[RMDB]
RNA sequence: GGGAACGACUCGAGUAGAGUCGAAAACAUGGUGGCAAGUACGGCGCGAUAUUGCACCACCUGCAAUAGAAGCGUAGACAUCAACUGUAGCGAGAGCUACUCAACUUAUGGACCUUAGAGCAUGCGAAGACGACUGGUCCUGUCGGAAUUCGCUAGAAUCGCCUAUGGUAUUCGUACCAUAGGCGAUAAAAGAAACAACAACAACAAC
Reactivity to DMS in 0.01 (KOAc 150mM, MgCl2 10mM, bicine 150mM(pH8.5), 24C), signal-to-noise 2, nucleotides 027 to 156: c010a080u000g020g010u000g010g030c040a070a120g070u000a070c050g130g020c010g060c040g000a150u000a010u000u000g020c030a180c000c210a040c080c300u000g070c010a060a020u000a020g020a170a220g010c020g020u000a050g000a080c080a080u000c110a070a070c040u000g010u020a050g010c030g000a260g000a280g000c000u000a000c010u010c110a040a060c110u020u010a080u000g010g010a080c040c000u000u000a080g000a130g040c060a080u000g000c050g030a160a080g000a160c030g050a100c070u020g010g020u020c050c020u000g000u020c020g010g000a100a230u000u020c030g050c070u020a080g000a180
Reactivity to 2A3 in 0.01 (KOAc 150mM, MgCl2 10mM, bicine 150mM(pH8.5), 24C), signal-to-noise 3, nucleotides 027 to 156: c040a010u040g000g010u030g020g000c070a080a040g130u050a090c070g000g000c000g050c010g050a070u010a000u030u010g010c020a020c030c070a090c020c080u000g000c000a010a000u000a010g120a270a040g030c000g000u030a050g110a160c030a060u090c050a060a110c080u080g010u020a000g000c000g000a050g000a010g040c010u030a040c040u020c040a070a130c010u100u120a060u220g000g000a010c000c030u050u100a090g010a020g080c100a060u130g010c030g010a030a020g020a100c000g010a010c020u050g080g120u040c000c030u000g000u000c000g000g010a060a070u000u010c000g020c040u020a030g110a080